[RMDB]
RNA sequence: GGGAACGACUCGAGUAGAGUCGAAAAAGUCUUUUAACUACAGACAUUCUAAUAGGUGUGUACUGGUCUCUCAUUUGGUUUUAAUUUGCAGUUCUUGAAUGCAUCUUUUCAUGUGCUUAUUGGCCAUUCACAUAUCCUAUGUGGUAAAGUGUCUAUACUCACCAGGACUAUUCGUAGUCCUGGUGAGAAAAGAAACAACAACAACAAC
Reactivity to 2A3 in 0.01 (KOAc 150mM, MgCl2 10mM, bicine 150mM(pH8.5), 24C), signal-to-noise 2, nucleotides 027 to 156: a000g040u060c030u030u110u040u090a190a120c120u180a080c060a030g000a050c030a040u120u010c050u070a050a020u000a140g000g010u010g000u000g000u020a020c030u010g000g020u000c000u010c020u010c040a010u010u040u160g110g000u050u020u040u150a030a030u040u000u040g020c010a050g030u160u140c120u140u190g170a050a000u000g020c010a030u010c000u060u090u020u030c050a020u000g010u010g030c070u090u210a060u090u200g000g000c020c010a020u020u050c030a010c010a030u040a010u090c000c000u050a050u100g150u090g000g130u100a110a000a070g000u000g030u060c000u020a060u260a040
About this RNA:
Chemical mapping of a 207-nucleotide RNA with 2A3. The data come from the RNA Mapping Database (RMDB), library OK3TST. The 2A3 profile rests on 582 reads. Values cover nucleotides 27 to 156. The reactions ran in a buffer of 150 mM KOAc, 10 mM MgCl2 and 150 mM bicine (pH 8.5), at 24 C. 2A3 adducts were read by reverse transcription with SuperScript II with manganese.